Source information: Structure probing data (2A3 and DMS) for a 177-nucleotide construct. The RNA was probed in 150 mM KOAc, 10 mM MgCl2 and 150 mM bicine (pH 8.5) at 24 C. 2A3 adducts were read by reverse transcription with SuperScript II with manganese. For DMS, 5,822 sequencing reads were counted. For DMS the reverse transcriptase was MarathonRT.
RNA sequence: GGGAACGACUCGAGUAGAGUCGAAAAGAUAUGGACUCCGCUGUGGACAUGCGUAAGGAUCGGAAACGAUCCUGUACGCAACAGCCACAGGAGUCCUAAGUCAAAACCGCGCUCUUCGGAGCGCGGAGCAUAUUGAGAGGUUCGCCUCUCAAUAUGCAAAAGAAACAACAACAACAAC
Reactivity to 2A3 in 0.01 (KOAc 150mM, MgCl2 10mM, bicine 150mM(pH8.5), 24C), signal-to-noise 4, nucleotides 027 to 126: g010a010u030a020u070g000g000a010c000u030c020c070g150c300u200g000u010g000g030a070c150a300u300g000c000g000u000a000a000g000g010a000u010c010g010g010a020a010a010c010g000a000u010c000c000u010g000u010a000c000g000c000a030a040c070a020g000c000c010a010c000a010g000g000a000g000u000c000c000u000a010a010g000u000c010a020a020a090a160c000c000g000c010g000c010u000c000u090u190c300g190g010a000g000c020g000c000g000g010a000
Reactivity to DMS in 0.01 (KOAc 150mM, MgCl2 10mM, bicine 150mM(pH8.5), 24C), signal-to-noise 4, nucleotides 027 to 126: g010a020u000a110u010g000g000a010c000u000c010c050g030c300u010g030u010g010g000a050c120a130u010g010c010g020u000a080a010g000g000a010u000c000g020g010a040a030a070c000g010a010u000c000c000u000g010u000a000c000g010c000a100a080c180a220g000c000c010a010c010a080g000g000a000g000u000c000c000u000a010a060g000u010c010a130a080a120a170c000c000g000c000g010c010u000c000u000u010c200g030g000a010g010c000g000c020g000g000a030